[RMDB]
RNA sequence: GGGAACGACUCGAGUAGAGUCGAAAACGCUCAAGACGCUGGCCUAUGAGUUGUGAUUUCUGCCUUUUCCCCUUCCUCCUUGGGCUAAGCCAGACCAGAAAGGGCCCCGUGCGCAACGUGCUUCACAAUCUCUCAGGGAAAGCGGCUAACGUGGCGAUGAUUAGUAUUACUUCGGUAAUACUAAUCAAAAAGAAACAACAACAACAAC
Reactivity to DMS in 0.01 (KOAc 150mM, MgCl2 10mM, bicine 150mM(pH8.5), 24C), signal-to-noise 2, nucleotides 027 to 156: c050g040c010u010c020a140a080g010a030c010g010c020u000g020g040c040c030u000a130u010g000a100g000u000u000g030u000g000a130u010u000u010c050u000g010c020c030u010u010u010u000c020c000c020c030u010u000c020c030u000c030c030u000u000g010g020g030c030u010a090a180g010c030c030a100g000a080c020c050a070g010a040a060a080g000g010g010c050c030c030c030g040u000g020c120g000c030a070a060c040g010u000g000c090u000u000c040a070c000a050a070u000c020u000c020u000c100a130g020g000g020a050a060a090g030c020g030g000c000u000a050a050c060g020u010g010g020c040g010a190
Reactivity to 2A3 in 0.01 (KOAc 150mM, MgCl2 10mM, bicine 150mM(pH8.5), 24C), signal-to-noise 2, nucleotides 027 to 156: c020g010c010u020c030a020a030g010a030c020g020c020u020g050g010c010c000u070a110u120g020a010g000u030u050g010u030g050a100u030u190u120c100u100g010c020c000u060u070u060u050c030c020c000c010u030u050c010c040u030c030c000u050u140g010g010g000c020u030a040a000g030c010c010a040g030a080c010c000a020g060a040a050a010g020g000g000c010c060c000c050g060u080g000c070g000c050a030a100c020g010u010g020c010u050u030c000a030c000a030a130u100c010u000c000u040c110a060g050g000g020a070a050a000g000c000g030g000c000u030a080a040c030g020u080g010g000c000g030a020